Chemical mapping of a 177-nucleotide RNA with 2A3 and DMS. The reactions ran in a buffer of 150 mM KOAc, 10 mM MgCl2 and 150 mM bicine (pH 8.5), at 24 C.
[RMDB]
RNA sequence: GGGAACGACUCGAGUAGAGUCGAAAAACAAAGCCCAGACUUUGGAGAGCGCCACAUUGCGUUAUUCCUUAAAUCCCAAUGGGUGAAGAAAAAUGAGAAAAUCGGCGCAGUCAACGUGAAGGCGGGAGUAUUUAUUAGUGUUCGCACUAAUAAAUACAAAAGAAACAACAACAACAAC
Reactivity to 2A3 in 0.01 (KOAc 150mM, MgCl2 10mM, bicine 150mM(pH8.5), 24C), signal-to-noise 8, nucleotides 027 to 126: a010c050a040a070a020g010c010c010c010a040g080a070c080u100u070u070g020g010a050g000a010g030c000g030c030c010a090c030a200u040u160g010c010g040u040u050a100u110u040c000c000u030u070a150a180a100u070c000c010c020a050a070u120g020g000g020u060g040a060a050g090a030a080a020a000a010u180g020a090g090a100a110a010a070u120c070g010g000c010g000c020a020g040u040c020a020a050c030g030u040g060a030a000g030g000c010g020g010g010a080
Reactivity to DMS in 0.01 (KOAc 150mM, MgCl2 10mM, bicine 150mM(pH8.5), 24C), signal-to-noise 9, nucleotides 027 to 126: a090c100a090a090a180g010c020c010c020a110g020a090c090u000u000u000g010g010a090g000a090g010c010g020c000c130a110c210a080u010u010g010c020g010u000u000a090u000u000c010c020u000u000a040a080a120u010c010c010c030a110a120u010g020g020g010u000g000a060a080g010a020a040a040a070a060u000g010a100g000a070a040a060a070u010c090g010g010c020g020c020a060g000u000c040a070a070c070g000u000g010a090a110g000g010c050g010g000g000a150

Reactivities are given for positions 27 through 126.